RNA sequence: GGGAACGACUCGAGUAGAGUCGAAAAUGUUAGGCUUGUGGAGCGCGACCCGGAUAGGUUUAUGCUGUUCUACCGUAUGGUGAUGUCCCACGUUCUGCCCGAGGACCUGCUCGGUGUGCCCCGCGUGCCUCCGAUAAAUGUUCGCAUUUAUCGGAGGAAAAGAAACAACAACAACAAC
Reactivity to 2A3 in 0.01 (KOAc 150mM, MgCl2 10mM, bicine 150mM(pH8.5), 24C), signal-to-noise 2, nucleotides 027 to 126: u130g040u050u090a020g000g010c010u030u140g000u020g040g040a080g000c050g000c020g040a060c010c020c030g040g030a110u100a100g030g070u100u140u120a150u260g090c080u120g040u170u040c030u040a050c030c000g060u090a120u200g030g010u050g050a130u130g080u130c000c050c000a020c010g030u110u040c030u110g020c000c000c000g060a110g050g030a040c020c000u040g010c000u010c000g030g000u010g010u040g030c020c010c010c000g000c000g020u050g070
Reactivity to DMS in 0.01 (KOAc 150mM, MgCl2 10mM, bicine 150mM(pH8.5), 24C), signal-to-noise 3, nucleotides 027 to 126: u010g010u000u010a080g020g020c050u000u010g040u010g010g020a060g010c050g020c090g010a120c130c030c050g000g020a040u000a070g010g000u010u010u030a060u020g020c060u000g020u000u000c030u010a070c030c060g010u010a090u020g010g010u000g000a140u000g000u000c030c010c030a100c070g020u010u010c090u000g010c020c010c040g010a130g000g000a050c040c040u000g000c030u000c020g010g010u010g010u010g000c070c010c010c080g010c160g000u010g020